RNA sequence: GGGAACGACUCGAGUAGAGUCGAAAACGAAACGAAGUGAAAGAGCUGGUCAGGAAGCUCGGUGAGAUGUGGAGUGAUGAAGAGGUGAAUCAUGGCGCUUGGCCUUGCGGAUAGUUACUGAUGUAUGCCCACUGAAAAUAUUCGUAUUUUCAGUGGGAAAAGAAACAACAACAACAAC
Reactivity to DMS in 0.01 (KOAc 150mM, MgCl2 10mM, bicine 150mM(pH8.5), 24C), signal-to-noise 7, nucleotides 027 to 126: c060g010a070a080a090c130g010a080a070g010u020g010a050a100a080g010a050g010c030u000g010g010u010c070a080g000g010a100a060g000c030u000c030g010g020u010g000a040g000a080u020g010u000g000g010a090g010u010g000a080u010g010a080a060g020a060g010g000u000g000a070a060u020c070a060u020g000g010c050g010c060u000u020g000g010c060c030u000u000g000c070g000g000a060u010a060g000u000u010a070c050u000g000a060u010g010u020a080u030g010
Reactivity to 2A3 in 0.01 (KOAc 150mM, MgCl2 10mM, bicine 150mM(pH8.5), 24C), signal-to-noise 8, nucleotides 027 to 126: c040g040a070a010a000c060g060a100a020g090u100g120a140a070a070g070a020g010c030u040g030g090u100c040a050g040g090a060a020g010c030u020c030g000g010u070g020a090g000a040u090g050u060g040g010a050g040u060g010a070u060g040a050a040g020a010g060g030u050g050a030a030u090c050a050u120g050g000c010g000c060u020u050g030g030c000c000u010u040g000c010g020g030a050u070a110g020u060u040a040c050u090g050a080u050g040u060a070u160g070